This 207-nucleotide RNA was probed chemically with DMS. The DMS profile rests on 5,305 reads. The RNA was probed in 150 mM KOAc, 10 mM MgCl2 and 150 mM bicine (pH 8.5) at 24 C. In probing experiments dimethyl sulfate is read out at A N1 and C N3, which are open when not base-paired.
[RMDB]
RNA sequence: GGGAACGACUCGAGUAGAGUCGAAAAGGGGUCCUUUCCCCGAACUCGCGUGUGGCUAGGAUGAAACGAGGUAAACUGAAGCCUCCACGGUUUACUACCCACCGUUUCAUCCUAGCCACACGAACUACGAGUUCCGGCGAAAGGACGGAGGCACCCACAUAUAGAUCUAGUUCGCUAGAUCUAUAUGAAAAGAAACAACAACAACAAC
Reactivity to DMS in 0.01 (KOAc 150mM, MgCl2 10mM, bicine 150mM(pH8.5), 24C), signal-to-noise 2, nucleotides 027 to 156: g010g020g010g010u000c010c020u000u000u000c010c070c010c030g010a020a020c010u000c000g000c010g010u000g090u000g020g020c000u010a030g050g000a050u000g010a030a000a030c030g000a170g030g000u000a010a010a040c000u010g000a050a110g000c020c020u000c000c000a300c030g010g000u000u000u000a010c010u000a060c000c020c030a300c040c000g000u000u020u010c000a010u000c010c020u000a000g000c000c000a020c000a010c010g010a000a070c050u010a030c020g000a050g010u000u020c030c060g000g010c100g000a070a050a020g000g000a030c040g010g020a050g020g010c000a140c010c010c010a230